[RMDB]
Structure probing data (2A3) for a 207-nucleotide construct. It was measured as part of the RMDB library OK3TST. Conditions: 150 mM KOAc, 10 mM MgCl2 and 150 mM bicine (pH 8.5), 24 C. 2A3 adducts were read by reverse transcription with SuperScript II with manganese.
RNA sequence: GGGAACGACUCGAGUAGAGUCGAAAAACUACGCAUUUAAAACUAUAUCUUCGGGUAAAAAUGAUGUCGUUACAUUAGACACUAUAUUAAAUGUGCUUGAUGGUAAUACAUAUUUCUACGGCUGUAUCAUCAUUAUUACCACCAACGCCGUGCAACGGCUUCGAGCACGAUUCGUCGUGCUCGAAGCAAAAGAAACAACAACAACAAC
Reactivity to 2A3 in 0.01 (KOAc 150mM, MgCl2 10mM, bicine 150mM(pH8.5), 24C), signal-to-noise 2, nucleotides 027 to 156: a000c080u100a050c030g010c020a030u120u110u180a090a130a060a120c100u120a110u050a070u280c040u120u110c160g060g020g030u110a090a110a080a030a080u110g090a110u050g030u070c050g020u080u040a080c030a080u120u110a020g040a060c000a000c010u050a050u050a050u230u180a100a070a080u090g020u010g020c020u020u050g010a010u050g020g030u020a020a020u070a070c070a000u150a100u110u160u070c100u090a050c030g050g000c040u040g040u080a030u060c010a010u000c010a000u030u080a020u100u050a060c030c040a070c020c020a140a030c120g000c040c010g010u020g020c050a100a080c080g070